The record gives the reactivity of an RNA of 177 nucleotides to DMS and 2A3. The DMS profile rests on 3,163 reads. For 2A3 the reverse transcriptase was SuperScript II with manganese. Reactivities are rounded to 0.1 and cut off at 0 and 3. The reactions ran in a buffer of 150 mM KOAc, 10 mM MgCl2 and 150 mM bicine (pH 8.5), at 24 C. It was measured as part of the RMDB library TTRDES.
RNA sequence: GGGAACGACUCGAGUAGAGUCGAAAAAAAAGAUAUGGAUUCUCUACCCACCUCCUCCAGCUGAUGACCCAUAAUCGGAAACGAUUAUGGCAAGGCUGCCCACGGAGAGGAGAAUCCUAAGUCAAAACUCUUACUUUAAGUUCGCUUAAAGUAAGAGAAAAGAAACAACAACAACAAC
Reactivity to DMS in 0.01 (KOAc 150mM, MgCl2 10mM, bicine 150mM(pH8.5), 24C), signal-to-noise 4, nucleotides 027 to 126: a070a060a140a100g000a060u000a160u010g020g010a010u000u000c010u000c010u010a130c060c030c060a300c110c000u000c000c010u010c160c030a010g020c000u000g020a060u020g000a150c300c010c000a000u000a000a010u000c000g020g000a100a060a100c010g010a000u000u000a000u000g000g000c010a020a050g000g000c010u010g000c190c130c070a070c250g010g000a010g000a120g020g000a020g000a010a000u000c010c010u000a020a090g020u010c060a090a090a090a170
Reactivity to 2A3 in 0.01 (KOAc 150mM, MgCl2 10mM, bicine 150mM(pH8.5), 24C), signal-to-noise 2, nucleotides 027 to 126: a010a020a040a070g130a090u240a100u150g000g000a010u020u000c000u000c010u170a300c040c020c020a040c020c010u010c000c010u010c020c000a020g000c010u070g070a300u120g040a190c010c000c010a010u020a000a010u010c010g010g000a070a020a020c010g010a010u020u000a000u000g010g000c000a020a040g000g010c010u000g000c030c030c000a110c080g010g020a010g010a010g040g000a010g000a000a000u010c000c000u000a090a010g170u110c020a010a030a040a300